[RMDB]
RNA sequence: GGGAACGACUCGAGUAGAGUCGAAAAGUUGAAGGUGCUAAGCUCUAUAGUGAUCUUAUGCCAGACUAUUAUUAUGAGCAUGCUAGUGGUAACAUGGUUAAAUUGCCAGCAAUUAUUAGAGGACUUGGUCUACGUUUUGUGAAAACACAGGCUACAAGCACUCUGUAGGAUUCGUCCUACAGAGUGCAAAAGAAACAACAACAACAAC
Reactivity to 2A3 in 0.01 (KOAc 150mM, MgCl2 10mM, bicine 150mM(pH8.5), 24C), signal-to-noise 3, nucleotides 027 to 156: g000u020u050g060a070a020g080g000u100g020c040u040a050a030g030c030u010c030u060a070u070a040g050u060g080a120u050c050u050u160a060u120g070c040c020a060g010a010c060u040a040u180u010a040u030u070a080u150g050a050g010c020a000u030g020c000u040a020g030u020g040g030u030a060a010c020a080u050g000g000u050u040a030a110a060u020u050g010c040c010a000g000c010a040a110u100u080a020u070u090a170g020a030g010g020a010c020u040u020g040g000u020c020u020a040c080g010u020u010u040u080g080u020g040a030a080a060a000c060a000c000a010g060g010c010u080a080c030a070a060
Reactivity to DMS in 0.01 (KOAc 150mM, MgCl2 10mM, bicine 150mM(pH8.5), 24C), signal-to-noise 2, nucleotides 027 to 156: g070u000u000g000a030a230g030g040u000g030c020u010a080a110g030c020u020c050u000a040u000a050g000u000g020a040u020c030u000u000a070u000g030c100c030a160g020a050c050u000a060u000u000a090u000u000a120u000g020a020g000c020a090u000g000c030u000a100g050u010g010g020u000a070a070c070a080u020g010g040u010u000a000a080a080u000u000g030c040c010a080g000c030a060a030u000u000a070u000u000a060g030a130g010g000a060c050u000u000g020g030u000c010u000a080c090g020u020u000u000u020g000u010g020a050a030a030a020c060a020c020a100g000g030c000u010a070c080a130a130
Background:
Source: RMDB library OK3TST, as collected in RNAgym. The record gives the reactivity of an RNA of 207 nucleotides to 2A3 and DMS. The DMS profile rests on 2,941 reads. For DMS the reverse transcriptase was MarathonRT. As a SHAPE reagent, 2A3 marks flexible, mostly unpaired nucleotides at the ribose 2'-OH. For 2A3, 1,192 sequencing reads were counted.